[RMDB]
Structure probing data (2A3 and DMS) for a 177-nucleotide construct. For DMS, 3,313 sequencing reads were counted. Source: RMDB library OK2TST, as collected in RNAgym. For 2A3 the reverse transcriptase was SuperScript II with manganese. The reactions ran in a buffer of 150 mM KOAc, 10 mM MgCl2 and 150 mM bicine (pH 8.5), at 24 C. Values are in units of 0.01, from 0 to 300, in steps of 10.
RNA sequence: GGGAACGACUCGAGUAGAGUCGAAAAGUCACGAGUGGGAGCAGGAGUUCUGCAGUCGGAUAUCGUGGAUUCUGUUUCUGUCUCCUCCGCCCUGGCUGUGUGGCCUCCCACAGGUCACUUAACCUCAGUAUUAGGUCGAUUUCGAUCGACCUAAUACAAAAGAAACAACAACAACAAC
Reactivity to 2A3 in 0.01 (KOAc 150mM, MgCl2 10mM, bicine 150mM(pH8.5), 24C), signal-to-noise 3, nucleotides 027 to 126: g030u020c010a010c060g060a060g020u050g000g000g020a150g030c090a090g050g060a040g040u090u070c030u050g000c020a010g040u040c020g070g030a050u050a030u260c150g100u130g140g030a040u060u020c020u060g130u060u120u060c040u050g090u020c050u070c120c000u030c030c010g000c010c020c000u020g070g000c000u030g040u010g020u040g190g010c020c030u020c000c030c000a020c040a020g060g010u040c020a010c100u080u120a070a080c010c040u060c060a030
Reactivity to DMS in 0.01 (KOAc 150mM, MgCl2 10mM, bicine 150mM(pH8.5), 24C), signal-to-noise 3, nucleotides 027 to 126: g010u000c070a030c080g010a150g030u000g000g000g010a080g040c100a080g010g000a080g020u010u010c060u010g010c020a050g020u000c020g010g010a080u000a040u000c100g030u010g000g000a070u000u000c040u010g010u010u000u010c030u000g010u010c060u000c030c010u000c050c080g020c100c020c000u000g010g010c010u010g010u020g030u000g000g010c040c020u000c050c050c030a060c160a080g000g020u000c080a060c080u000u000a090a100c020c020u000c200a170